[RMDB]
RNA sequence: GGGAACGACUCGAGUAGAGUCGAAAAUAAGUCAGAGCAACGAGCCUUGCACCACACGGUCUCCCUUCACAUGGAAAAUCCUUUGCUUAGGGGUGUGUUUGUACCUUCUGCAAAGACUGACCAGAAUUUCAUUUUCAGCACAUAAUUAACAAUACAAGAUCCCUAAAUACUUCGGUAUUUAGGGAUCAAAAGAAACAACAACAACAAC
Reactivity to DMS in 0.01 (KOAc 150mM, MgCl2 10mM, bicine 150mM(pH8.5), 24C), signal-to-noise 3, nucleotides 027 to 156: u000a080a100g010u010c030a110g020a150g020c040a080a150c070g020a090g010c040c030u000u000g020c040a110c050c060a090c060a060c070g020g050u000c020u000c030c020c020u000u000c090a080c100a110u010g000g000a070a110a120a100u010c050c020u000u000u000g000c020u000u000a060g030g010g030g020u010g020u010g020u000u010u000g000u010a050c040c020u000u000c040u000g000c040a040a040a050g010a130c030u010g000a230c050c020a080g010a030a100u000u000u010c030a060u020u000u000u000c030a070g030c030a100c040a090u010a040a100u010u000a100a080c070a050a110u020a140c040a070a200
Reactivity to 2A3 in 0.01 (KOAc 150mM, MgCl2 10mM, bicine 150mM(pH8.5), 24C), signal-to-noise 6, nucleotides 027 to 156: u160a030a000g050u030c030a010g010a010g040c050a060a080c050g020a010g000c010c020u020u050g020c040a030c040c000a030c010a020c060g030g030u000c050u040c040c010c000u100u140c060a090c010a120u050g020g040a030a040a010a060u090c000c020u030u020u020g010c010u050u060a030g010g020g010g000u070g010u010g010u050u060u130g040u060a040c000c000u040u070c020u040g010c000a000a020a020g030a040c060u040g020a030c000c010a020g040a070a080u070u080u050c020a020u030u080u040u070c020a010g080c040a000c010a050u200a140a020u290u300a110a040c030a090a020u300a130c080a060a040